[RMDB]
RNA sequence: GGGAACGACUCGAGUAGAGUCGAAAAUGGUUUCGACGUGGGUGCGGAAUUGGAGUGGUGCAUGCCGAGCAUCAGUGAGCUCGUAAAUCCAGCUGAAACAAACCAACUGCGAACGACGAACGUUUCGCCCUCGCCGCUUAAACACCGGUGAGCGUCUGCAAUAGAUUUUGUUCGCAAAAUCUAUUGCAAAAGAAACAACAACAACAAC
Reactivity to 2A3 in 0.01 (KOAc 150mM, MgCl2 10mM, bicine 150mM(pH8.5), 24C), signal-to-noise 4, nucleotides 027 to 156: u090g040g000u000u030u060c030g020a030c030g020u050g020g020g030u070g030c020g030g020a050a050u090u100g030g010a030g030u060g010g020u040g020c030a050u130g060c030c030g020a020g010c000a030u050c010a010g040u040g130a010g010c010u020c030g100u130a030a040a020u010c010c010a010g030c020u020g040a060a070a030c060a040a060a050c050c030a050a060c080u090g010c020g030a020a010c020g110a030c060g050a130a030c030g020u000u080u100c020g000c020c000c000u010c000g000c000c000g000c010u020u060a040a050a000c020a000c010c010g000g000u000g000a010g010c050g040u030c040u050
Reactivity to DMS in 0.01 (KOAc 150mM, MgCl2 10mM, bicine 150mM(pH8.5), 24C), signal-to-noise 1, nucleotides 027 to 156: u000g010g020u000u010u000c000g030a060c070g010u000g020g020g020u000g010c090g000g020a060a140u000u010g020g020a100g040u010g020g040u000g010c030a040u010g000c090c030g000a060g020c000a030u000c030a090g010u000g040a120g010c000u000c010g000u000a070a040a060u000c050c040a080g000c010u010g000a130a100a200c090a050a130a110c020c000a030a070c000u000g010c000g010a020a060c020g020a090c080g000a070a100c090g050u060u010u000c010g000c020c030c000u010c000g000c000c000g040c050u000u010a100a140a220c120a130c130c020g000g000u010g020a020g010c010g040u000c030u000